[RMDB]
RNA sequence: GGGAACGACUCGAGUAGAGUCGAAAACUUGCAAAACUCUGGAAAAUUACAUGCUCUAUAAAGUUCUUCCUUCUUACAUUGAUGCAUCCUUCUACUUGGUAGGCAUCAAGAAGAACAAGGUGGAUUUCCUUAAGAAGAGGAACAAAAACAUGGAUACCAAAAUAACCCUGUUCGCAGGGUUAUUUUGAAAAGAAACAACAACAACAAC
Reactivity to 2A3 in 0.01 (KOAc 150mM, MgCl2 10mM, bicine 150mM(pH8.5), 24C), signal-to-noise 3, nucleotides 027 to 156: c010u020u110g040c020a020a030a070a270c070u090c110u140g060g050a130a170a110a100u170u080a090c010a020u030g020c020u010c050u140a150u110a180a130a020g010u010u000c000u020u010c050c000u020u020c000u010u030a050c020a140u010u020g000a010u000g010c000a080u060c020c010u110u150c050u100a220c050u070u090g100g010u100a130g210g000c000a000u000c000a000a000g020a010a000g030a040a020c060a030a010g020g000u040g020g050a090u110u070u180c000c000u010u020a020a010g010a020a000g000a020g020g010a010a000c020a010a120a030a000a000c020a030u040g050g000a070u090a150c030
Reactivity to DMS in 0.01 (KOAc 150mM, MgCl2 10mM, bicine 150mM(pH8.5), 24C), signal-to-noise 2, nucleotides 027 to 156: c050u000u000g030c080a070a060a170a130c110u010c070u010g000g000a110a110a110a180u010u000a070c010a050u000g020c040u000c050u000a110u000a090a090a200g000u000u000c020u000u000c070c050u010u010c030u000u000a060c110a250u010u010g040a030u000g000c000a150u000c040c010u000u000c070u000a100c180u000u000g030g010u000a110g020g070c010a040u000c010a000a030g000a090a090g030a060a050c040a030a020g040g000u000g000g000a130u010u030u000c040c020u010u010a060a020g000a040a030g000a040g000g000a050a110c030a060a060a040a050a010c020a020u000g000g010a110u010a130c100
Chemical mapping of a 207-nucleotide RNA with 2A3 and DMS.
The data come from the RNA Mapping Database (RMDB), library OK3TST.
For DMS, 3,069 sequencing reads were counted.
The RNA was probed in 150 mM KOAc, 10 mM MgCl2 and 150 mM bicine (pH 8.5) at 24 C.